[RMDB]
RNA sequence: GGGAACGACUCGAGUAGAGUCGAAAAAGGAUGCCAGUUAACGGCGCGAUUGACCGCGUCAUUGAGCGUCAGGUUGCCCGGCGCGGCGGCGCUGAGCGGCAACUCAGCGGCGGAGCCAUCCAGCGAAUUAGUAAUACCCUUUCGAGGGUAUUACUAAAAAAGAAACAACAACAACAAC
Reactivity to DMS in 0.01 (KOAc 150mM, MgCl2 10mM, bicine 150mM(pH8.5), 24C), signal-to-noise 7, nucleotides 027 to 126: a060g010g010a040u010g010c040c030a140g000u010u030a100a100c160g010g000c000g020c010g010a150u020u030g010a110c210c050g010c020g010u000c010a120u020u010g010a110g010c010g010u010c040a140g000g020u010u000g000c010c010c020g000g000c020g020c010g010g030c150g000g010c010g000c010u000g010a070g030c120g010g010c090a030a050c010u000c100a090g010c030g010g000c020g010g010a100g020c110c020a050u000c020c010a140g020c110g000a100a160
Reactivity to 2A3 in 0.01 (KOAc 150mM, MgCl2 10mM, bicine 150mM(pH8.5), 24C), signal-to-noise 5, nucleotides 027 to 126: a000g070g000a020u030g010c010c020a030g050u080u120a100a040c070g010g000c010g000c010g050a080u090u300g100a100c130c020g000c010g010u010c020a060u050u140g070a050g050c020g020u040c030a020g030g010u020u040g010c000c000c000g000g010c020g000c020g070g130c070g090g030c010g000c000u010g050a030g030c070g050g010c010a010a080c010u010c020a040g060c040g050g000c010g020g030a010g020c010c000a010u010c000c000a010g070c020g080a080a070

Conditions: 150 mM KOAc, 10 mM MgCl2 and 150 mM bicine (pH 8.5), 24 C. This 177-nucleotide RNA was probed chemically with DMS and 2A3.